[RMDB]
RNA sequence: GGGAACGACUCGAGUAGAGUCGAAAAUGAAUAUAUUGAUAACCUUCACAAAUUUGCUGAUUAUUUUUGUAGCGCUCUUUCAUGAGAAAUGAUUGUCCCACAUGCAUAUCCAUGACUAAAAAAAGCAAUAGAUGGUUUACUUCGGUAAACCAUCUAUAAAAGAAACAACAACAACAAC
Reactivity to 2A3 in 0.01 (KOAc 150mM, MgCl2 10mM, bicine 150mM(pH8.5), 24C), signal-to-noise 3, nucleotides 027 to 126: u100g020a100a040u150a050u080a070u270u060g050a040u070a130a040c070c000u110u090c030a000c010a070a080a060u100u050u070g000c010u030g010a140u060u110a110u170u140u010u120u060g060u000a010g050c020g010c050u000c010u020u080u010c000a000u070g040a000g070a130a020a010u080g060a060u000u090g040u030c000c020c000a020c000a040u120g000c000a030u050a020u020c040c020a020u070g070a100c140u220a000a100a030a020a000a000a000g100c050a010
Reactivity to DMS in 0.01 (KOAc 150mM, MgCl2 10mM, bicine 150mM(pH8.5), 24C), signal-to-noise 1, nucleotides 027 to 126: u020g010a110a030u000a010u000a090u000u010g040a100u030a060a090c100c000u000u000c110a090c020a060a060a080u010u010u010g020c040u000g000a110u000u010a090u000u010u000u010u000g010u000a040g040c010g000c090u010c040u040u010u010c000a030u010g000a120g000a050a110a010u020g000a030u000u020g000u000c000c000c000a050c170a040u000g000c010a030u010a050u000c050c100a030u000g040a050c170u020a000a010a040a020a050a060a010g010c100a060